[RMDB]
RNA sequence: GGGAACGACUCGAGUAGAGUCGAAAAACAGAAACAAGGAGUUUAAAUUAGAUUUGCAAACGGACGGUACUAAAUACCGUCACUUUUACGUCUAACUUAUCGUUAACUCUGCAAAAAGAAAACAAGAAAAACAAGCGUGAGUUCGCUCACGCUUGAACUAUCGUAGUAACUUCGGUUACUACGAUAGAAAAGAAACAACAACAACAAC
Reactivity to DMS in 0.01 (KOAc 150mM, MgCl2 10mM, bicine 150mM(pH8.5), 24C), signal-to-noise 3, nucleotides 027 to 156: a170c030a110g000a140a080a120c060a120a170g000g000a070g010u000u000u010a020a030a040u000u000a030g000a040u000u000u000g160c010a000a030a010c150g000g020a010c010g030g020u000a000c010u010a070a050a300u000a010c020c000g050u000c000a010c010u000u000u000u010a000c010g010u010c000u000a000a020c040u010u000a050u010c100g000u010u000a030a030c010u000c000u000g000c060a030a060a110a050a090g000a050a050a080a080c050a090a050g020a080a080a100a060a140c000a000a020g000c000g050u010g000a030g020u000u000c300g000c010u000c020a000c000g020c000u000u000g000a020a060
Reactivity to 2A3 in 0.01 (KOAc 150mM, MgCl2 10mM, bicine 150mM(pH8.5), 24C), signal-to-noise 6, nucleotides 027 to 156: a000c050a030g110a030a090a010c040a040a100g040g000a020g010u040u070u090a040a080a050u050u030a030g020a040u060u060u220g040c070a040a030a020c040g010g010a000c000g000g010u030a030c070u240a140a070a100u050a000c000c000g000u000c000a030c000u000u020u020u050a020c010g000u000c010u010a030a050c030u060u090a040u130c030g070u020u040a010a000c010u000c010u040g010c070a040a070a040a050a050g080a030a050a020a030c070a050a040g110a100a100a020a000a010c000a000a010g000c000g010u000g010a010g010u050u110c190g020c080u000c000a000c000g000c000u000u000g000a000a000